[RMDB]
Annotation:
Structure probing data (DMS and 2A3) for a 177-nucleotide construct. The RNA was probed in 150 mM KOAc, 10 mM MgCl2 and 150 mM bicine (pH 8.5) at 24 C. The data come from the RNA Mapping Database (RMDB), library OK1LIB. 2A3 adducts were read by reverse transcription with SuperScript II with manganese.
RNA sequence: GGGAACGACUCGAGUAGAGUCGAAAACGGAGCCCGCACGGGGAGGCCAGCUGCCACCCGCUGGACAAGCUGGCGCGCACGCUCGUGAGCACCUUCGGCGGCGGCGUUGACGCGAUGGCCUGUGUCGUGGACACAGAUAUUUCGAUAUCUGUGUCCAAAAAGAAACAACAACAACAAC
Reactivity to DMS in 0.01 (KOAc 150mM, MgCl2 10mM, bicine 150mM(pH8.5), 24C), signal-to-noise 7, nucleotides 027 to 126: c100g000g000a110g000c020c030c010g020c050a060c030g000g010g000g000a100g010g010c010c010a030g000c020u000g010c000c020a040c030c110c160g010c140u000g010g010a070c070a080a070g020c010u000g000g000c020g010c040g000c050a040c050g000c050u040c050g020u010g010a130g010c030a180c080c090u020u010c100g010g010c020g000g010c030g000g010c050g000u020u020g000a100c040g010c020g000a100u020g010g010c020c020u010g000u010g010u010c060g020
Reactivity to 2A3 in 0.01 (KOAc 150mM, MgCl2 10mM, bicine 150mM(pH8.5), 24C), signal-to-noise 9, nucleotides 027 to 126: c050g080g020a030g060c010c010c020g000c010a030c010g020g000g010g010a030g040g030c010c020a010g010c010u030g010c010c000a030c040c090c030g010c120u020g020g050a090c030a050a020g010c010u020g010g000c010g010c010g010c030a050c020g080c020u130c060g030u040g040a040g020c010a110c030c030u170u150c060g060g000c010g020g000c000g010g000c030g030u040u110g060a110c030g010c020g060a090u100g050g040c000c000u030g010u020g020u050c040g040